[RMDB]
RNA sequence: GGGAACGACUCGAGUAGAGUCGAAAAGAUAUGGAUCCCGGUAGUUUCAACAGCUCGGAAACGAGACAUGAAAUUACCCGGGAUCCUAAGUCAAAGACCUGAUAGAACUUCGGUUCUAUCAGGUCAAGCAUACCAUUUAGUUCGCUAAAUGGUAUGCAAAAGAAACAACAACAACAAC
Reactivity to DMS in 0.01 (KOAc 150mM, MgCl2 10mM, bicine 150mM(pH8.5), 24C), signal-to-noise 5, nucleotides 027 to 126: g000a050u010a300u010g000g010a010u000c000c000c000g010g010u000a000g020u000u010u000c000a020a080c260a210g010c000u010c010g010g010a130a090a200c010g000a010g000a040c070a200u000g000a010a010a010u000u000a010c090c030c020g010g000g000a000u000c000c000u000a000a080g010u010c030a090a120a170g010a010c010c000u000g000a000u000a000g000a020a010c000u000u020c220g010g000u010u000c000u000a000u000c000a000g000g000u000c000a000a040
Reactivity to 2A3 in 0.01 (KOAc 150mM, MgCl2 10mM, bicine 150mM(pH8.5), 24C), signal-to-noise 2, nucleotides 027 to 126: g010a010u090a020u180g010g020a000u010c000c010c020g000g000u000a010g010u010u030u000c130a190a150c090a140g020c010u010c000g000g050a050a110a050c010g010a000g000a030c040a050u090g000a010a000a000u010u000a020c030c030c000g000g000g000a010u000c000c000u000a010a010g000u000c000a030a140a140g030a010c020c000u000g010a010u010a020g010a000a000c010u080u080c300g060g000u010u000c000u020a010u000c010a010g010g000u000c000a000a020